[RMDB]
RNA sequence: GGGAACGACUCGAGUAGAGUCGAAAAGAUAUGGAGCGACCUCUGCCGAUAAGCUGUCAAUCGGAAACGAUUGCAGCUUUUGACGGCACGUCGCUCCUAAGUCAAAACACACUCUUCGGAGUGUGAAUCGUGGUGUUACGUUCGCGUAACACCACGAAAAAGAAACAACAACAACAAC
Reactivity to DMS in 0.01 (KOAc 150mM, MgCl2 10mM, bicine 150mM(pH8.5), 24C), signal-to-noise 1, nucleotides 027 to 126: g010a090u010a300u000g000g030a020g000c000g000a030c020c010u010c010u000g010c000c010g000a070u000a000a010g010c010u000g000u000c020a020a000u000c020g010g020a080a050a220c000g040a010u000u000g000c000a020g000c000u000u000u000u020g010a240c120g030g000c000a020c180g000u010c000g010c010u000c000c000u000a000a030g010u000c050a080a040a260a230c000a000c000a010c000u000c020u000u000c300g000g000a040g030u010g000u000g000a050a200